[RMDB]
RNA sequence: GGGAACGACUCGAGUAGAGUCGAAAAUGACCGCUCAAGAUUACGGAUACUUUGUCAGUAAUCAAUUUAUGUUUUAAUAAAUAAUUUGAGCUAGGGCCUGACGGACAGCCGGGUCAAAUGCCCAAAACGAGAAGUAGCUCUUCGGAGCUGCUUCUCGAAAAGAAACAACAACAACAAC
Reactivity to 2A3 in 0.01 (KOAc 150mM, MgCl2 10mM, bicine 150mM(pH8.5), 24C), signal-to-noise 4, nucleotides 027 to 126: u040g020a010c000c010g000c000u000c000a000a010g000a010u000u010a010c000g020g010a010u030a100c120u060u110u300g010u020c020a010g000u000a000a010u000c000a000a000u000u020u000a030u010g020u000u180u070u120a100a040u040a010a010a020u120a070a110u020u020u010g000a000g000c030u080a090g070g010g040c040c040u070g090a020c040g100g020a020c020a000g000c030c000g010g000g000u000c020a010a000a030u070g010c000c000c010a010a060a000a010
Reactivity to DMS in 0.01 (KOAc 150mM, MgCl2 10mM, bicine 150mM(pH8.5), 24C), signal-to-noise 1, nucleotides 027 to 126: u030g000a040c000c020g000c010u000c000a000a030g010a010u000u020a000c000g040g010a020u000a090c210u040u020u040g010u000c000a050g000u000a000a000u000c000a100a000u000u010u000a020u000g000u020u010u030u060a050a020u000a010a000a010u000a040a190u030u000u010g000a020g020c000u000a140g010g000g000c070c060u000g010a150c180g020g040a130c070a220g000c000c000g070g000g000u000c000a000a060a070u020g000c000c000c000a050a000a050a140

Background: Structure probing data (2A3 and DMS) for a 177-nucleotide construct. The DMS profile rests on 2,158 reads. For 2A3, 3,371 sequencing reads were counted.